[RMDB]
Structure probing data (2A3 and DMS) for a 177-nucleotide construct. The DMS profile rests on 1,763 reads. It was measured as part of the RMDB library OK2TST. For 2A3 the reverse transcriptase was SuperScript II with manganese. DMS adducts were read by reverse transcription with MarathonRT.
RNA sequence: GGGAACGACUCGAGUAGAGUCGAAAAGCUGGGCUAAUAAUUCCGGUUAGCUGUCGCAUGGAUCAAUGGAGGGAAGACAAACUCACGCUCUCAGUAGAAUCACAGCACUGCGCAGUACCAGUCGGGCGUCAGCCAGAGGAUUCGUCCUCUGGCUGACAAAAGAAACAACAACAACAAC
Reactivity to 2A3 in 0.01 (KOAc 150mM, MgCl2 10mM, bicine 150mM(pH8.5), 24C), signal-to-noise 2, nucleotides 027 to 126: g050c020u070g010g050g000c050u050a050a050u080a190a080u290u000c020c000g000g040u010u000a020g020c000u050g150u230c010g000c050a030u070g050g020a050u040c060a070a070u130g000g020a030g000g050g000a090a000g070a090c090a070a140a070c040u040c050a060c120g040c010u030c000u000c040a010g030u070a030g100a160a030u090c060a100c030a200g060c000a030c040u030g030c020g000c020a010g010u050a090c050c010a000g030u050c070g010g030g030c020
Reactivity to DMS in 0.01 (KOAc 150mM, MgCl2 10mM, bicine 150mM(pH8.5), 24C), signal-to-noise 2, nucleotides 027 to 126: g000c030u000g010g010g010c060u000a020a070u000a070a160u010u000c010c050g000g020u010u000a040g000c020u010g020u010c030g030c020a070u010g010g010a070u000c090a060a080u050g010g020a060g020g000g020a050a070g010a070c180a070a060a130c130u000c050a090c150g000c010u000c020u010c010a080g000u000a120g000a080a070u010c030a080c110a110g020c060a100c180u000g000c040g000c030a040g000u000a070c040c020a080g020u010c080g000g010g040c270